RNA sequence: GGGAACGACUCGAGUAGAGUCGAAAAGCUUACGGAACCUAUAUUUAGAAACGUCUACUAACGAUUUUUUUAUGCUUGCAUUAUUAAUGGUAUGUAAUAUGAUUGAUUGUGUACGGAAUACCAAUUUGUCAAGUAUGAAUACGGAACACAAACAUAACAUUGGUGACGGAUUCGUCCGUCACCAAUGAAAAGAAACAACAACAACAAC
Reactivity to DMS in 0.01 (KOAc 150mM, MgCl2 10mM, bicine 150mM(pH8.5), 24C), signal-to-noise 1, nucleotides 027 to 156: g050c040u000u000a120c030g000g040a090a160c040c020u000a030u010a140u000u010u000a080g000a150a130a110c020g010u000c010u010a280c000u000a040a060c070g020a000u000u070u000u000u040u000u110a020u000g010c020u000u010g000c050a060u010u000a100u000u000a060a180u000g020g000u000a020u000g010u020a100a070u000a070u000g000a130u030u000g010a110u000u000g010u020g040u010a020c050g020g010a200a300u000a020c030c000a020a110u000u000u010g010u000c000a000a130g090u000a020u030g010a040a050u000a160c050g000g010a060a140c070a030c040a030a070a030c030a060u000a050a170
Reactivity to 2A3 in 0.01 (KOAc 150mM, MgCl2 10mM, bicine 150mM(pH8.5), 24C), signal-to-noise 2, nucleotides 027 to 156: g030c010u040u060a000c020g010g030a090a010c000c010u020a030u050a100u120u180u130a120g040a040a050a020c020g020u020c030u120a050c050u060a060a020c000g050a040u020u000u000u040u040u120u040a010u020g010c000u010u010g000c030a010u030u060a050u080u140a280a050u130g010g000u020a010u050g000u030a050a130u070a090u100g140a120u130u160g090a070u090u080g090u000g030u050a070c050g030g090a000a010u010a010c000c030a030a070u070u030u040g150u170c010a050a000g000u010a070u070g040a000a050u090a080c040g040g070a060a010c070a000c010a030a070a000c070a060u120a070a010